Record summary:
An RNA of 170 nucleotides, treated with DMS and 2A3 and read out base by base. The RNA was probed in 150 mM KOAc, 10 mM MgCl2 and 150 mM bicine (pH 8.5) at 24 C.
RNA sequence: GGGAACGACUCGAGUAGAGUCGAAAACUUGCAAGAUAAGACUGGCGACUUUAUGUCUACAAUUAUUACUUCCUGCCAAACUGCUGUUAGUAAGCUUCUAGAUACAUGUUUUGAAGCUACAGAAGCACCGGUCUCGACUUCGGUCGAGACAAAAGAAACAACAACAACAAC
Reactivity to DMS in 0.01 (KOAc 150mM, MgCl2 10mM, bicine 150mM(pH8.5), 24C), signal-to-noise 4, nucleotides 027 to 129: c040u020u060g040c100a000a090g060a160u040a080a070g030a100c090u010g090g030c110g000a090c120u000u000u000a120u100g000u000c000u020a120c050a100a090u030u030a060u010u060a140c120u020u030c030c040u020g020c020c030a020a020a050c160u000g000c030u010g010u050u030a060g010u000a060a030g030c050u000u060c040u090a030g020a090u050a090c160a110u070g000u000u000u000u000g020a040a040g010c000u020a050c140a050g070a110a010g040c050a120c120c060g010
Reactivity to 2A3 in 0.01 (KOAc 150mM, MgCl2 10mM, bicine 150mM(pH8.5), 24C), signal-to-noise 7, nucleotides 027 to 129: c040u040u040g020c050a070a020g020a130u090a020a030g040a050c030u010g010g030c010g020a040c030u110u210u120a090u170g050u010c020u020a010c030a080a070u120u080a060u070u090a110c030u060u020c010c010u010g040c000c020a060a050a050c050u050g020c000u000g000u110u060a050g000u010a070a070g000c000u000u000c030u030a020g010a060u100a160c130a120u270g110u020u040u000u050g030a000a000g000c000u020a020c010a000g100a020a000g000c000a020c010c040g060